Conditions: 150 mM KOAc, 10 mM MgCl2 and 150 mM bicine (pH 8.5), 24 C. Structure probing data (DMS and 2A3) for a 177-nucleotide construct.
RNA sequence: GGGAACGACUCGAGUAGAGUCGAAAAAAUUGGAUGUCUCGGAAACCUGCCACAGCUUAAAAUGUUGGACCUGUCUGGCACAAAUACCGACAAUGAGUCUCUCAGAAGUUUAUGCCUAUCACAGACAGUUGCGUAUACUCUUCGGAGUAUACGCAACAAAAGAAACAACAACAACAAC
Reactivity to DMS in 0.01 (KOAc 150mM, MgCl2 10mM, bicine 150mM(pH8.5), 24C), signal-to-noise 1, nucleotides 027 to 126: a060a020u000u010g010g000a010u010g050u010c020u000c040g000g000a070a030a000c110c010u000g050c060c010a050c000a120g010c070u010u010a030a130a110a010u000g070u000u000g000g000a090c100c000u000g000u000c030u040g010g060c090a030c130a000a080a020u010a130c110c030g030a050c090a050a060u090g000a120g000u000c090u010c030u000c050a000g000a000a070g070u000u020u000a100u040g000c030c000u000a050u010c030a060c160a010g000a070c200a080
Reactivity to 2A3 in 0.01 (KOAc 150mM, MgCl2 10mM, bicine 150mM(pH8.5), 24C), signal-to-noise 2, nucleotides 027 to 126: a000a050u160u080g100g000a000u060g000u030c030u010c130g080g010a010a100a000c020c000u000g010c000c050a000c000a000g000c000u060u070a040a040a090a000u170g010u050u050g070g040a060c000c000u000g020u010c020u020g050g010c090a010c000a080a140a020u110a110c010c000g050a050c090a020a060u150g010a020g050u000c000u000c000u000c030a020g020a130a040g040u000u030u070a090u100g000c000c000u100a100u240c010a030c000a070g120a000c040a010